Structure probing data (2A3 and DMS) for a 177-nucleotide construct. It was measured as part of the RMDB library TTRDEL. The 2A3 profile rests on 2,486 reads.
RNA sequence: GGGAACGACUCGAGUAGAGUCGAAAAGAUAUGGAUUUGAACUACAGCCGAAGGAGACUAUUCGGAAACGAACGAAUCUCCCUCUCGGCUGCAAAUCCUAAGUCAAACGACGGGUUCGCCCGUCGAACUAUUCGAAGAACUUCGGUUCUUCGAAUAGAAAAGAAACAACAACAACAAC
Reactivity to 2A3 in 0.01 (KOAc 150mM, MgCl2 10mM, bicine 150mM(pH8.5), 24C), signal-to-noise 2, nucleotides 027 to 126: g030a040u110a050u130g000g000a030u020u020u000g050a130a090c130u180a070c300a000g000c020c010g000a190a080g020g000a000g010a020c110u120a110u000u030c040g020g000a180a000a090c040g010a040a000c010g010a100a290u000c000u000c000c000c000u040c000u000c000g020g000c000u000g010c000a000a000a000u000c010c000u010a150a010g030u050c030a030a090a090c030g000a000c000g000g000g020u040u060c260g020c060c010c000g000u000c000g010a010a000
Reactivity to DMS in 0.01 (KOAc 150mM, MgCl2 10mM, bicine 150mM(pH8.5), 24C), signal-to-noise 2, nucleotides 027 to 126: g000a020u000a300u010g000g000a010u000u000u000g000a070a090c060u030a270c000a000g000c000c000g010a040a120g000g010a020g010a020c090u000a210u000u010c010g000g000a090a080a130c010g010a010a000c120g000a100a090u010c020u000c010c010c050u010c160u000c000g000g000c000u010g010c010a000a000a000u000c000c010u000a030a130g030u000c010a070a120a140c040g000a000c010g000g010g000u000u010c200g010c020c000c000g010u000c000g000a010a110

Values cover nucleotides 27 to 126. For DMS, 1,764 sequencing reads were counted. For DMS the reverse transcriptase was MarathonRT. The reactions ran in a buffer of 150 mM KOAc, 10 mM MgCl2 and 150 mM bicine (pH 8.5), at 24 C. 2A3 adducts were read by reverse transcription with SuperScript II with manganese.